The data come from the RNA Mapping Database (RMDB), library RFM100. This 177-nucleotide RNA was probed chemically with 2A3 and DMS. For DMS, 1,180 sequencing reads were counted. For 2A3, 1,621 sequencing reads were counted. Reactivities are rounded to 0.1 and cut off at 0 and 3.
RNA sequence: GGGAACGACUCGAGUAGAGUCGAAAAUAGAGCGACCGAUUGGGGAGUUCAACUCCGAGAGGAGUUGUCUCCCCUGUCAAACUCCAAACCUACGGACGCCGUCGACGCAGGGAAUCCGGUGUGCGGGACUGCAAGUCAUCUUCGGAUGACUUGCAGUAAAAGAAACAACAACAACAAC
Reactivity to 2A3 in 0.01 (KOAc 150mM, MgCl2 10mM, bicine 150mM(pH8.5), 24C), signal-to-noise 2, nucleotides 027 to 126: u130a000g030a000g020c030g010a120c130c040g030a060u020u050g020g000g010g000a010g000u150u040c000a000a000c000u000c000c020g020a030g050a090g020g030a000g000u000u000g010u000c000u000c000c000c040c000u000g000u020c000a000a030a050c010u000c010c030a050a150a110c000c000u030a020c020g060g010a010c030g000c020c000g050u080c060g000a040c080g000c070a110g080g040g010a020a060u010c000c010g000g030u030g000u010g120c000g010g020g080
Reactivity to DMS in 0.01 (KOAc 150mM, MgCl2 10mM, bicine 150mM(pH8.5), 24C), signal-to-noise 1, nucleotides 027 to 126: u030a120g000a040g000c130g040a300c300c140g020a000u000u000g030g000g000g000a020g010u030u010c010a000a000c000u000c000c000g000a250g000a240g000g030a000g030u000u000g000u000c000u000c000c110c020c040u000g040u020c000a060a200a100c000u000c000c090a080a080a130c000c000u000a040c080g010g000a020c000g060c060c010g000u050c150g000a050c110g000c060a090g000g000g000a080a210u060c070c030g010g000u000g010u000g000c050g000g010g010